[RMDB]
RNA sequence: GGGAACGACUCGAGUAGAGUCGAAAAGAAAGAAACGUCUCUGCCACUGGGAUACUCCUUGUGCUCGCUGUGCAUAUCGAUUCAAACUAGUGAACACAUCUGGUGGUAUCUCAGUGGCCGGGAUGAACUAAAGGUGCCGUUUCGACGGCACCUUUAGAAAAGAAACAACAACAACAAC
Reactivity to 2A3 in 0.01 (KOAc 150mM, MgCl2 10mM, bicine 150mM(pH8.5), 24C), signal-to-noise 2, nucleotides 027 to 126: g010a000a020a000g050a120a100a000c000g030u000c000u000c000u000g000c010c020a000c000u000g000g000g000a000u000a000c000u010c000c010u010u000g010u000g020c000u000c000g000c000u060g000u050g150c150a160u270a180u300c200g190a120u080u270c060a000a050a190c000u050a030g000u000g020a030a010c010a000c000a000u000c040u070g000g100u140g030g000u020a000u000c000u000c000a000g000u000g000g000c000c010g000g020g000a000u020g000a000a000
An RNA of 177 nucleotides, treated with 2A3 and read out base by base.
The data come from the RNA Mapping Database (RMDB), library RFM100.
For 2A3 the reverse transcriptase was SuperScript II with manganese.
The RNA was probed in 150 mM KOAc, 10 mM MgCl2 and 150 mM bicine (pH 8.5) at 24 C.
Values cover nucleotides 27 to 126.